Chemical mapping of a 177-nucleotide RNA with DMS. High DMS reactivity at an A or C suggests that its Watson-Crick edge is free. Values cover nucleotides 27 to 126. Conditions: 150 mM KOAc, 10 mM MgCl2 and 150 mM bicine (pH 8.5), 24 C. It was measured as part of the RMDB library RFMREP.

RNA sequence: GGGAACGACUCGAGUAGAGUCGAAAACCCCCACACGGCUAGACGCCUCGGCUGGUUCGCGACGCAGACCCCCGGCCGUGGAUGCUCGCUCGGGCUCGGGAUCCGCCCAGGUAGCGGCCGGACCCUGCUAUAUCUCUGGGUUCGCCCAGAGAUAUAGAAAAGAAACAACAACAACAAC
Reactivity to DMS in 0.01 (KOAc 150mM, MgCl2 10mM, bicine 150mM(pH8.5), 24C), signal-to-noise 1, nucleotides 027 to 126: c040c000c020c070c050a110c040a070c060g010g000c030u020a060g010a070c110g020c020c000u000c170g030g000c010u020g030g020u010u000c020g000c000g020a060c110g010c080a140g000a280c030c040c020c030c030g010g030c020c010g060u000g010g020a130u000g000c060u000c010g000c080u000c090g010g010g040c000u010c050g030g000g000a040u000c040c060g000c010c000c020a100g020g010u000a090g000c050g010g000c020c000g000g000a140c050c020c010u000g000